An RNA of 177 nucleotides, treated with DMS and 2A3 and read out base by base.
For 2A3, 3,615 sequencing reads were counted.
For 2A3 the reverse transcriptase was SuperScript II with manganese.
Reactivities are given for positions 27 through 126.
[RMDB]
RNA sequence: GGGAACGACUCGAGUAGAGUCGAAAAGCUGCGCGAGAUCGGCAUCGACUAUGCCCAGGGCCUGGCCAUCGGCGCGCCCCUGCCGUUCAGUCGCCAGCCUCCGGGGGCUGGAGUGGAUGCCCAGGGACAUUUACCUGGAGUUCGCUCCAGGUAAAUGAAAAGAAACAACAACAACAAC
Reactivity to DMS in 0.01 (KOAc 150mM, MgCl2 10mM, bicine 150mM(pH8.5), 24C), signal-to-noise 4, nucleotides 027 to 126: g010c050u000g010c090g020c030g000a090g030a090u000c080g010g020c010a020u000c030g000a040c030u000a150u010g010c020c010c040a300g000g000g010c300c040u010g020g010c020c030a060u000c080g000g020c010g010c130g010c010c020c020c060u000g000c010c000g000u000u010c150a120g000u000c110g000c010c000a010g010c070c010u020c020c070g010g000g010g000g010c010u000g010g010a080g020u000g000g000a030u000g000c040c010c030a070g000g010g000a280
Reactivity to 2A3 in 0.01 (KOAc 150mM, MgCl2 10mM, bicine 150mM(pH8.5), 24C), signal-to-noise 3, nucleotides 027 to 126: g020c010u080g000c030g040c040g070a050g040a190u100c040g010g000c000a000u020c020g080a010c010u060a040u180g030c010c020c010a040g010g000g000c030c020u030g000g020c010c010a050u040c030g000g000c020g010c030g080c010c010c000c010u010g010c010c000g010u040u090c060a070g060u110c030g010c010c010a000g000c000c000u070c010c040g300g000g030g010g000c040u050g050g070a070g010u060g050g020a010u040g000c030c000c000a020g030g020g020a000
For DMS the reverse transcriptase was MarathonRT. Conditions: 150 mM KOAc, 10 mM MgCl2 and 150 mM bicine (pH 8.5), 24 C.